[RMDB]
RNA sequence: GGGAACGACUCGAGUAGAGUCGAAAAUCGUUGGGCCAUGCAGCGGCGGCCGCCGCGGAGCUGCGAGCGGCGGUAGCGCCCCCUGUGAGAAGGCCCGAGAUGCCCCUGCCACUGUGAACGGUGCCGCCUCCGUGGCGAUAUUCGUAUCGCCACGGAGAAAAGAAACAACAACAACAAC
Reactivity to 2A3 in 0.01 (KOAc 150mM, MgCl2 10mM, bicine 150mM(pH8.5), 24C), signal-to-noise 2, nucleotides 027 to 126: u060c060g060u070u070g010g030g050c030c030a030u130g000c000a000g010c000g020g000c000g000g010c000c000g000c000c000g020c000g040g050a100g060c150u120g060c080g080a060g000c000g020g000c040g030g000u060a050g100c000g000c000c000c000c000c000u020g020u030g070a120g130a110a260g040g000c000c000c010g040a000g000a000u060g000c000c000c030c000u040g000c050c000a040c010u110g030u050g300a060a010c070g000g000u000g000c030c000g000c000
Reactivity to DMS in 0.01 (KOAc 150mM, MgCl2 10mM, bicine 150mM(pH8.5), 24C), signal-to-noise 1, nucleotides 027 to 126: u050c020g000u040u000g170g010g000c050c000a120u050g020c020a000g000c300g050g040c090g000g000c040c010g000c000c010g000c000g000g000a120g020c130u000g000c000g020a250g030c000g010g010c020g000g000u020a090g000c000g000c000c010c050c000c090u000g000u000g000a100g000a130a080g000g040c000c000c020g020a040g000a010u030g000c000c000c040c000u010g000c160c000a000c000u050g020u020g000a010a020c000g000g000u000g000c000c020g010c130